[RMDB]
RNA sequence: GGGAACGACUCGAGUAGAGUCGAAAAUUGAGGGCAAGAAUGAAGAGAAAAGCUGGUCAUAGAUUUCUAAAGAAGAGACAGGUGGUUUGCAGUCAUGUUAAAUAACUCACAGACUUUGUGGACCCACCAUACCUUAGAAAGGUCAGAUGAUAGAGGAUCGAUUUACUAAUUUCGAUUAGUAAAUCGAAAAAGAAACAACAACAACAAC
Reactivity to DMS in 0.01 (KOAc 150mM, MgCl2 10mM, bicine 150mM(pH8.5), 24C), signal-to-noise 3, nucleotides 027 to 156: u010u010g010a070g010g030g010c040a060a100g010a090a090u000g010a120a120g010a130g000a090a090a100a160g040c010u000g030g020u000c020a130u010a140g000a140u010u010u010c030u000a050a050a140g000a080a170g010a120g010a180c080a050g020g010u010g040g010u000u000u000g040c030a030g070u000c030a060u010g000u000u000a050a070a090u000a050a150c070u000c060a070c040a120g000a030c020u000u000u010g010u010g040g010a050c020c020c020a060c010c020a120u000a050c010c020u000u010a130g030a070a040a060g010g010u000c030a060g010a080u000g000a080u000a070g020a100g010g010a170
Reactivity to 2A3 in 0.01 (KOAc 150mM, MgCl2 10mM, bicine 150mM(pH8.5), 24C), signal-to-noise 4, nucleotides 027 to 156: u080u060g010a060g000g020g000c030a050a020g040a050a090u120g010a040a040g020a020g010a050a090a050a020g030c050u050g030g000u030c010a030u040a080g070a080u070u130u050c040u110a120a050a040g040a030a010g040a010g030a060c060a070g000g020u000g000g000u020u030u030g000c000a000g000u030c020a040u030g020u030u070a090a190a160u140a150a060c030u050c070a030c000a000g040a030c000u090u120u170g000u030g020g010a010c040c030c020a010c010c000a040u060a060c000c010u030u020a040g040a060a060a000g040g010u010c020a030g010a070u070g010a030u100a060g060a030g060g020a010